[RMDB]
RNA sequence: GGGAACGACUCGAGUAGAGUCGAAAAUACGAAAUAUGCACAGAAGCAUCAUAUAGGGUGGUGCGUUGCGUGUAUAGUAGCGGUAGCAAGAUGGAACCACGACGAGAUCCACCUAACAUUGAGUUCACUCGUGCGAGCUAUUCGUAGCUCGCGCGAGAAAAGAAACAACAACAACAAC
Reactivity to 2A3 in 0.01 (KOAc 150mM, MgCl2 10mM, bicine 150mM(pH8.5), 24C), signal-to-noise 5, nucleotides 027 to 126: u220a010c020g030a000a110a000u080a010u030g030c000a030c010a080g090a160a030g050c000a000u020c010a000u170a040u130a220g210g060g010u010g000g000u010g030c030g050u040u160g100c030g020u000g030u010a020u010a070g070u070a040g090c040g020g040u040a020g020c040a080a040g020a110u110g010g060a040a060c040c010a030c070g100a010c040g030a030g010a120u030c000c010a010c010c030u060a130a040c070a070u040u110g020a040g060u040u030c020a010
Reactivity to DMS in 0.01 (KOAc 150mM, MgCl2 10mM, bicine 150mM(pH8.5), 24C), signal-to-noise 3, nucleotides 027 to 126: u060a020c090g000a130a160a100u020a020u010g000c030a010c040a220g000a070a110g000c010a010u000c030a010u000a120u040a070g030g030g040u030g000g000u020g020c010g020u000u000g040c130g030u000g000u000a020u000a020g020u050a080g050c060g040g000u040a030g020c060a080a060g000a080u010g010g000a070a070c060c010a050c140g040a090c130g000a100g010a040u000c020c060a070c030c010u000a050a100c100a190u000u030g000a110g000u020u010c120a150